[RMDB]
RNA sequence: GGGAACGACUCGAGUAGAGUCGAAAACUGAGUACUUCGAGUAUGGGUAUUAUCAUUACAACAACGAAUGAUUGGAGUACAGUACAAAAGCUCAAUGCAGGUGGCGCAGAUAUUAUGGUGCCGAUGAAAACAGAUCGUCAUUCGUGACGAUCUGUUUAAAAGAAACAACAACAACAAC
Reactivity to 2A3 in 0.01 (KOAc 150mM, MgCl2 10mM, bicine 150mM(pH8.5), 24C), signal-to-noise 2, nucleotides 027 to 126: c030u050g000a000g030u070a070c080u020u140c100g060a050g020u070a070u200g140g000g100u020a030u070u070a010u110c030a030u050u090a040c030a190a020c030a050a010c110g120a040a070u080g090a130u020u070g070g000a030g000u010a010c000a030g040u010a010c050a060a150a030a020g000c010u000c020a030a050u200g060c010a000g090g070u030g020g000c000g000c030a000g000a080u110a070u300u120a120u160g080g030u000g020c000c000g030a140u120g020a040
Reactivity to DMS in 0.01 (KOAc 150mM, MgCl2 10mM, bicine 150mM(pH8.5), 24C), signal-to-noise 3, nucleotides 027 to 126: c060u000g010a120g010u000a020c030u000u000c040g000a230g000u000a030u010g020g000g030u000a070u000u000a040u000c030a040u000u000a110c100a080a130c130a080a110c120g000a040a040u010g000a080u000u010g030g000a050g000u000a020c050a140g010u010a060c090a060a080a080a100g010c000u000c070a050a060u010g010c030a060g000g020u010g000g010c020g000c080a030g000a100u000a080u010u000a050u000g010g010u000g020c030c030g010a110u000g000a100

The record gives the reactivity of an RNA of 177 nucleotides to 2A3 and DMS. The data come from the RNA Mapping Database (RMDB), library OK2TRN. 2A3 adducts were read by reverse transcription with SuperScript II with manganese. Reactivities are rounded to 0.1 and cut off at 0 and 3.